[RMDB]
RNA sequence: GGGAACGACUCGAGUAGAGUCGAAAAGCUUUAUCCAAAGGGAAUACUGCAUUUCAAUUAAACUUUAAGCUCCUUGAAAUUGUUAAUUUGAAGUUCAGUUGAACUAGGUUCAAACAUUAUAGUCAAAGUUUAUUUUUACUUCUCAAACUGCUACUCAUCAAGGUACUGAUUUCGAUCAGUACCUUGAAAAAGAAACAACAACAACAAC
Reactivity to DMS in 0.01 (KOAc 150mM, MgCl2 10mM, bicine 150mM(pH8.5), 24C), signal-to-noise 1, nucleotides 027 to 156: g010c020u020u000u000a030u020c000c040a040a090a140g010g030g010a170a130u020a060c040u000g010c040a140u000u000u000c000a050a070u010u000a050a010a020c000u000u030u000a100a140g010c040u000c050c010u010u010g010a090a100a070u010u000g010u000u000a060a090u010u000u000g010a070a020g010u010u000c010a100g040u000u000g000a100a090c020u000a070g000g000u000u010c040a130a030a060c040a070u010u000a090u010a070g010u000c020a070a030a060g000u000u000u000a050u030u020u000u000u000a060c010u000u000c040u000c050a030a020a060c040u000g030c040u010a170c050u000c000a300
Reactivity to 2A3 in 0.01 (KOAc 150mM, MgCl2 10mM, bicine 150mM(pH8.5), 24C), signal-to-noise 2, nucleotides 027 to 156: g000c010u060u110u090a050u040c000c000a080a080a010g000g010g030a030a050u040a080c000u040g000c010a020u020u000u100c010a030a060u020u030a080a080a110c010u030u030u070a110a070g070c040u020c050c080u090u060g050a090a050a070u080u030g020u060u040a030a100u010u020u090g020a010a000g000u010u040c010a000g020u000u000g020a010a020c030u040a030g070g020u110u120c060a050a090a050c020a060u140u190a100u170a210g030u010c020a090a000a000g010u000u140u020a080u090u040u020u090u040a100c010u060u090c060u040c080a110a100a010c060u120g020c010u000a000c000u000c060a090